[RMDB]
This 177-nucleotide RNA was probed chemically with 2A3 and DMS.
For 2A3, 2,454 sequencing reads were counted.
For DMS, 2,667 sequencing reads were counted.
RNA sequence: GGGAACGACUCGAGUAGAGUCGAAAAGCGGCAGAGGGCCCUGUGGUGGCGACUGGGGCAUGCGAGCCACGGUGGACUCUAGCAUGUUGAGAAAGGCCGAGCGAGGAACGGGAAUCAGGUCCUCGCUCCUCUUGUGGACGUUCGCGUCCACAAGAGGAAAAGAAACAACAACAACAAC
Reactivity to 2A3 in 0.01 (KOAc 150mM, MgCl2 10mM, bicine 150mM(pH8.5), 24C), signal-to-noise 2, nucleotides 027 to 126: g020c030g010g010c050a020g010a030g110g070g110c020c020c010u010g020u040g010g040u040g100g070c010g020a050c070u090g000g000g050g070c010a020u100g010c040g030a040g040c020c000a030c020g010g020u200g000g040a080c020u000c010u060a030g020c040a080u150g060u070u080g150a160g060a050a060a040g070g010c020c060g020a010g000c010g000a010g020g000a060a050c020g050g020g160a060a170u240c060a090g040g040u010c000c000u000c000g000c010u000
Reactivity to DMS in 0.01 (KOAc 150mM, MgCl2 10mM, bicine 150mM(pH8.5), 24C), signal-to-noise 3, nucleotides 027 to 126: g010c050g030g020c050a070g000a080g030g010g010c030c010c000u000g010u000g000g010u000g000g020c010g000a100c100u010g000g000g000g000c190a080u000g010c050g030a300g000c020c010a040c050g030g060u020g020g000a300c010u000c020u000a090g020c060a040u000g010u000u000g000a110g010a050a110a100g000g000c040c060g010a040g010c000g010a020g010g000a030a080c030g010g010g010a080a140u010c090a100g020g020u000c010c010u000c010g010c010u000